This 207-nucleotide RNA was probed chemically with 2A3.
For 2A3 the reverse transcriptase was SuperScript II with manganese.
The RNA was probed in 150 mM KOAc, 10 mM MgCl2 and 150 mM bicine (pH 8.5) at 24 C.
The 2A3 profile rests on 439 reads.
It was measured as part of the RMDB library OK3TST.
[RMDB]
RNA sequence: GGGAACGACUCGAGUAGAGUCGAAAAUCACUUUGAAAGAACAUGGCCACCAAAAAGUUCCAGCUUUGUAGGACCUCAGAGUUCAAGUAGAGUAACCAGACUAUACUAGCACCUUAGUCGAAUUCUAAAUCCCAAGAAGAGGCUUCAGUUGGCCUAAGGACUUUUACCUAUUCGUAGGUAAAAGUCCAAAAGAAACAACAACAACAAC
Reactivity to 2A3 in 0.01 (KOAc 150mM, MgCl2 10mM, bicine 150mM(pH8.5), 24C), signal-to-noise 1, nucleotides 027 to 156: u080c030a020c090u220u090u090g010a070a040a100g030a140a000c000a070u080g010g000c030c000a040c010c060a060a040a000a040a000g080u270u130c100c110a070g000c060u000u120u090g040u100a110g000g000a050c040c000u120c050a070g010a000g100u000u000c030a050a010g020u050a050g030a000g000u000a050a040c010c000a060g020a050c010u040a000u000a180c000u080a080g090c060a110c070c120u030u020a000g030u040c070g000a020a000u070u000c000u020a020a130a130u070c030c020c030a000a000g020a000a000g070a050g130g010c050u190u130c070a070g040u050u110g000g000c000c010u000a010a070